[RMDB]
RNA sequence: GGGAACGACUCGAGUAGAGUCGAAAACUGGAGGAUCAAGGAGGCUGAGUCUGAUGAAGCAAGACUUUGUUGAUACACUCCUCCUAGACAAAAGGGUGGGGAGAGCAGCCCGUACUGGAGAAAGCCAUCGUAAUUUCUGAUUCGUCAGAAAUUACGAAAAAGAAACAACAACAACAAC
Reactivity to DMS in 0.01 (KOAc 150mM, MgCl2 10mM, bicine 150mM(pH8.5), 24C), signal-to-noise 7, nucleotides 027 to 126: c090u010g010g000a050g000g010a110u010c070a120a070g000g010a090g010g000c210u000g000a070g000u010c020u020g010a140u020g010a110a090g030c090a120a050g010a100c020u000u000u010g010u000u000g000a140u030a080c130a120c190u000c000c000u000c010c000u020a070g010a120c140a050a060a080a070g000g000g030u020g020g010g000g000a060g010a080g010c070a100g010c040c020c030g030u010a050c100u000g000g010a090g000a070a070a110g010c050c080a090
Reactivity to 2A3 in 0.01 (KOAc 150mM, MgCl2 10mM, bicine 150mM(pH8.5), 24C), signal-to-noise 6, nucleotides 027 to 126: c030u030g010g020a020g030g030a060u070c050a030a070g030g020a010g050g000c060u010g010a010g020u000c020u050g070a100u130g100a100a030g100c080a080a040g020a080c000u030u030u030g040u020u050g060a060u030a120c060a030c030u010c000c000u000c000c000u030a030g020a040c060a030a080a050a020g040g020g030u080g020g020g020g000a100g010a010g010c040a000g010c000c000c000g010u050a050c030u050g040g000a050g060a040a030a020g030c020c010a020